[RMDB]
RNA sequence: GGGAACGACUCGAGUAGAGUCGAAAAAAGAUCAUAGGAACCGCCGUCAAGAACAACAUGGCUGUGCAUAGUGAUCUAUCAUACUGGAUAGAGAGCGGACUCAACGACACCUGGAAGCUUGAGAGGGUACUCACCCCGUUUUCGAACGGGGUGAGUAAAAAGAAACAACAACAACAAC
Reactivity to DMS in 0.01 (KOAc 150mM, MgCl2 10mM, bicine 150mM(pH8.5), 24C), signal-to-noise 1, nucleotides 027 to 126: a160a000g000a010u000c010a080u020a040g000g000a190a050c080c040g000c000c020g020u000c090a170a010g010a070a030c140a150a070c120a100u000g000g000c030u030g010u020g000c090a080u000a100g000u000g020a100u020c000u000a140u000c000a120u040a090c080u000g020g000a020u000a030g010a100g030a160g050c010g000g000a080c080u000c020a020a040c080g000a020c070a030c040c040u010g010g000a160a050g000c050u020u030g000a040g000a110g000g000g000
Reactivity to 2A3 in 0.01 (KOAc 150mM, MgCl2 10mM, bicine 150mM(pH8.5), 24C), signal-to-noise 2, nucleotides 027 to 126: a000a000g050a010u070c080a090u070a080g100g000a030a030c000c020g030c000c000g000u050c020a080a000g130a140a060c040a020a020c050a270u120g050g000c100u070g000u040g060c020a030u070a020g130u080g050a010u020c000u000a000u080c020a000u040a250c100u180g150g000a010u060a060g040a030g000a000g130c040g000g040a000c000u000c050a020a000c050g040a000c010a020c050c010u010g110g040a020a010g000c040u050u030g010a010g010a110g060g030g030